[RMDB]
RNA sequence: GGGAACGACUCGAGUAGAGUCGAAAAGCUCAUAGCCUUAUCGCCUCAGCUUCCGCUCGUAAGACGAGGGCAACGAUAAGUCACCCAAAACGAGAUCGUGGGGACGCCGCCGUUUGAGGAUCGAAACACUAAAUUGAAUCAAACUAGCUUAUUUCUUGUUACAUGUUCAGUUCGCUGAACAUGUAACAAAAGAAACAACAACAACAAC
Reactivity to 2A3 in 0.01 (KOAc 150mM, MgCl2 10mM, bicine 150mM(pH8.5), 24C), signal-to-noise 3, nucleotides 027 to 156: g010c010u060c120a140u180a060g020c010c000u030u020a040u020c020g010c000c030u050c030a030g010c010u050u030c020c020g050c050u000c020g070u070a020a080g050a160c040g020a040g000g010g000c060a070a030c020g010a020u030a050a040g030u040c050a150c010c060c000a050a040a000a020c020g030a010g010a050u130c040g010u070g010g010g000g010a030c050g020c020c000g020c000c010g010u010u040u030g030a050g020g010a030u080c040g090a000a050a030c090a090c110u120a050a100a140u140u180g090a040a040u030c020a030a040a050c050u070a020g100c030u150u120a060u080u090u010c010u000u000
This 207-nucleotide RNA was probed chemically with 2A3. Conditions: 150 mM KOAc, 10 mM MgCl2 and 150 mM bicine (pH 8.5), 24 C.